[RMDB]
RNA sequence: GGGAACGACUCGAGUAGAGUCGAAAAGGAGGGCGAGUACAUCCCGCUGGACCAGAUCGACAUCGAUGUGGGCUUCGACAAGGGCCUGGACCGCAUCUUUCUGGUGUCGCCCAUCACCAUCUUGCAUGAAAUUGACGAGGCCAGCCCGCUCUUCGGCGGGCGUACUGACUUUCGAGUCAGUACGCCCAAAAGAAACAACAACAACAAC
Reactivity to 2A3 in 0.01 (KOAc 150mM, MgCl2 10mM, bicine 150mM(pH8.5), 24C), signal-to-noise 4, nucleotides 027 to 156: g030g010a010g030g000g010c020g040a050g050u080a070c060a130u050c020c020c010g000c060u020g040g050a220c000c010a020g010a070u040c030g050a050c020a060u090c070g030a030u040g030u100g080g050g000c050u190u190c050g100a110c120a170a200g010g000g020c000c040u070g050g060a030c020c020g000c040a040u030c030u050u180u070c060u130g000g000u020g040u070c040g030c000c010c010a030u050c020a000c010c000a030u080c030u140u130g000c010a070u100g120a100a130a110u130u080g020a020c030g020a030g030g000c000c000a000g000c000c010c010g020c020u040c040u020u000c030g060g010c030
Reactivity to DMS in 0.01 (KOAc 150mM, MgCl2 10mM, bicine 150mM(pH8.5), 24C), signal-to-noise 1, nucleotides 027 to 156: g000g020a080g000g010g030c060g010a000g000u000a060c100a190u000c020c030c040g080c060u000g000g020a070c000c010a070g020a100u010c070g030a080c100a120u000c050g000a040u020g020u010g000g000g020c000u000u010c050g020a110c180a100a130g000g020g010c010c010u010g000g010a020c000c000g030c120a070u000c000u000u000u000c000u010g030g000u000g000u000c170g020c030c000c050a160u010c070a070c090c020a150u010c040u010u010g050c110a210u000g000a070a080a220u010u000g010a050c000g000a140g040g030c030c010a110g040c020c000c000g010c040u000c020u000u010c040g000g040c130